[RMDB]
RNA sequence: GGGAACGACUCGAGUAGAGUCGAAAAGUGUUGAUUAUACUAAGAAGUUUCUUACAGUUGACGGUGUGCAAUAUUAUUGCUACACGUCUAAGGACACUUUAGAUGAUAUCUUACAACAGGCUAAUAACUAGCAACACUAGUUCGCUAGUGUUGCUAGAAAAGAAACAACAACAACAAC
Reactivity to 2A3 in 0.01 (KOAc 150mM, MgCl2 10mM, bicine 150mM(pH8.5), 24C), signal-to-noise 1, nucleotides 027 to 126: g030u010g000u000u000g020a070u060u070a030u040a160c010u030a070a000g010a060a020g020u020u040u020c000u070u060a070c030a160g060u020u050g050a010c050g000g090u020g010u080g020c020a000a030u080a100u300u010a030u050u110g000c010u050a000c040a000c030g000u020c010u010a010a000g020g010a010c010a000c000u050u000u000a020g030a020u040g000a000u000a020u050c070u040u060a070c000a040a000c000a020g030g110c020u020a040a050u070a200a120
Reactivity to DMS in 0.01 (KOAc 150mM, MgCl2 10mM, bicine 150mM(pH8.5), 24C), signal-to-noise 1, nucleotides 027 to 126: g000u000g010u000u000g000a050u020u000a040u010a020c060u040a210a270g000a010a070g000u000u000u000c010u020u000a130c250a150g050u010u010g010a020c030g000g000u000g020u000g020c000a010a010u010a120u000u000a040u030u000g010c000u020a060c040a030c010g020u010c000u000a040a070g000g020a020c010a010c010u000u020u000a060g010a170u010g000a140u000a040u010c020u000u000a180c010a010a030c050a080g010g000c120u000a050a080u000a040a170